[RMDB]
RNA sequence: GGGAACGACUCGAGUAGAGUCGAAAAGAUAUGGAGACCCGUGUAGGGAGCUCGACCUCGGAAACGAGGAGCAUCGAUCUACGGUCUCCUAAGUCAAAAGUAAGCCACUCUUCGGAGUGGCUUACAACUUAUGAAGAUCCUUCGGGAUCUUCAUAAGAAAAGAAACAACAACAACAAC
Reactivity to DMS in 0.01 (KOAc 150mM, MgCl2 10mM, bicine 150mM(pH8.5), 24C), signal-to-noise 3, nucleotides 027 to 126: g010a030u000a240u030g000g000a010g010a020c030c040c300g000u010g030u000a060g010g020g010a080g010c010u010c060g000a120c210c010u000c000g020g000a050a030a070c000g000a010g000g000a040g010c030a160u000c090g010a120u010c020u000a070c100g010g000u000c000u000c000c000u000a000a050g000u000c010a090a090a080a120g000u000a000a010g020c010c010a010c010u000c000u000u000c220g000g010a020g020u000g000g000c000u000u000a000c000a050a110
Reactivity to 2A3 in 0.01 (KOAc 150mM, MgCl2 10mM, bicine 150mM(pH8.5), 24C), signal-to-noise 1, nucleotides 027 to 126: g020a000u030a020u080g000g010a020g000a000c100c190c210g130u090g080u080a270g050g300g090a020g030c000u030c030g090a080c020c040u000c010g010g000a060a020a040c000g010a000g010g030a000g050c020a200u140c070g290a200u060c030u010a000c020g000g010u000c000u000c010c010u010a030a010g000u010c010a110a000a000a130g000u010a010a000g000c000c010a010c020u000c040u010u250c300g040g020a030g000u000g000g050c000u040u000a000c000a000a000